[RMDB]
RNA sequence: GGGAACGACUCGAGUAGAGUCGAAAAGAUAUGGAUCAUAUUGGUCAACAGCGAUAUGUCGGAAACGACAUCAUCGACAUGACCUGUAUGAUCCUAAGUCAAAGGAUCGGACUUCGGUCCGAUCCAACCUGACCCCAAAGUUCGCUUUGGGGUCAGGAAAAGAAACAACAACAACAAC
Reactivity to 2A3 in 0.01 (KOAc 150mM, MgCl2 10mM, bicine 150mM(pH8.5), 24C), signal-to-noise 1, nucleotides 027 to 126: g010a010u060a000u060g000g020a000u000c000a010u010a020u070u030g050g010u070c260a300a060c150a300g010c000g000a010u000a000u040g000u000c000g050g000a000a060a000c010g040a010c010a010u060c100a010u030c020g070a060c080a210u300g020a010c000c010u000g000u000a000u000g000a000u000c000c000u000a010a010g000u040c070a090a070a240g020g000a010u020c040g000g010a000c000u100u180c300g060g000u050c010c010g000a010u000c000c000a020a020